[RMDB]
RNA sequence: GGGAACGACUCGAGUAGAGUCGAAAAGCUUCUGGACACCUUAGGCUCAGAAGAUUGCUACUUGCGAUGCAAGCGGUGAGUUUUUUGAGGUUUUUUGUAAAUUCCACUUCGGUGGAGUGUAUCAGGACACUAUGGACCUCUUCGGAGGUCCAUAGUGAAAAGAAACAACAACAACAAC
Reactivity to 2A3 in 0.01 (KOAc 150mM, MgCl2 10mM, bicine 150mM(pH8.5), 24C), signal-to-noise 4, nucleotides 027 to 126: g020c030u020u020c000u010g020g020a020c020a020c000c000u040u100a070g040g010c000u000c000a010g000a000a010g000a020u000u020g020c000u010a030c000u010u000g000c030g250a120u280g000c010a010a010g010c010g030g000u160g120a060g020u000u000u000u050u000u000g030a040g070g090u050u040u010u020u030u060g100u070a090a110a060u120u020c000c000a000c000u010u090c230g050g000u000g010g020a020g010u020g010u020a200u110c010a010g000g010a000
Reactivity to DMS in 0.01 (KOAc 150mM, MgCl2 10mM, bicine 150mM(pH8.5), 24C), signal-to-noise 1, nucleotides 027 to 126: g010c130u000u000c020u000g020g000a000c020a040c030c000u000u030a060g010g000c000u000c000a030g000a000a070g000a030u000u000g020c030u000a170c000u020u020g030c000g050a190u040g000c050a030a030g000c060g000g000u000g010a040g000u020u020u040u020u020u000g020a000g000g000u000u000u000u000u000u020g000u000a130a050a130u060u000c010c000a030c010u040u050c120g050g030u000g000g000a010g030u000g020u000a000u020c000a030g000g050a220
The record gives the reactivity of an RNA of 177 nucleotides to 2A3 and DMS. For 2A3 the reverse transcriptase was SuperScript II with manganese. Conditions: 150 mM KOAc, 10 mM MgCl2 and 150 mM bicine (pH 8.5), 24 C. Reactivities are given for positions 27 through 126.